[RMDB]
RNA sequence: GGGAACGACUCGAGUAGAGUCGAAAAGAGGCGAAAUAAUUCCCAUCUCCUUUGUACGGCCGGAGAUGGGUCUGGCCGUACUAAUAAGCCUCAUAGUGACGAGAGUCACGAAUUCUGGAUAGCCUUUGGUAGUCGGCUAUCCUAUGACUACCGUAGACCAUUAUCCAGGCUUCGGCCUGGAUAAUGGAAAAGAAACAACAACAACAAC
Reactivity to 2A3 in 0.01 (KOAc 150mM, MgCl2 10mM, bicine 150mM(pH8.5), 24C), signal-to-noise 2, nucleotides 027 to 156: g000a000g000g000c000g090a110a010a040u180a010a110u110u010c030c010c010a030u120c110u100c020c030u030u080u060g000u000a000c000g000g020c010c050g040g000a050g110a120u300g180g010g000u000c000u000g000g000c000c000g010u010a000c000u000a000a000u020a010a000g000c010c000u000c000a050u160a030g040u020g000a000c000g010a010g020a000g180u000c000a000c000g020a060a040u200u040c030u070g020g020a030u010a030g000c000c000u100u030u130g100g020u090a090g040u080c030g000g000c000u010a000u020c010c000u040a060u110g010a000c000u010a050c030c020g050u070a060g040a070